[RMDB]
The record gives the reactivity of an RNA of 177 nucleotides to 2A3. The data come from the RNA Mapping Database (RMDB), library OK1LIB. For 2A3 the reverse transcriptase was SuperScript II with manganese. The reactions ran in a buffer of 150 mM KOAc, 10 mM MgCl2 and 150 mM bicine (pH 8.5), at 24 C. As a SHAPE reagent, 2A3 marks flexible, mostly unpaired nucleotides at the ribose 2'-OH. For 2A3, 756 sequencing reads were counted.

RNA sequence: GGGAACGACUCGAGUAGAGUCGAAAAUAGUCGAGCUUCUGUCGCCACAUCCGCCGUGAGGUCUUCGGCACUCGGCCAAGCGCCGGCGGAAGAGAUAGUCAUCUGCUUUUCAGAAUCCGCGCUUGCGGGAGGAUCGAGGGUUCGCCCUCGAUCCUCCAAAAGAAACAACAACAACAAC
Reactivity to 2A3 in 0.01 (KOAc 150mM, MgCl2 10mM, bicine 150mM(pH8.5), 24C), signal-to-noise 2, nucleotides 027 to 126: u140a000g070u080c030g030a030g000c010u080u030c000u010g020u000c080g040c060c020a090c050a090u030c030c000g000c030c020g110u180g110a160g120g000u130c030u050u020c050g020g000c020a090c140u140c090g270g000c020c000a000a000g000c110g020c040c060g000g000c000g020g000a050a000g050a000g010a050u100a030g180u060c020a050u020c040u050g000c050u100u080u060u090c010a070g040a090a040u060c020c000g000c000g050c150u170u120g050c060g030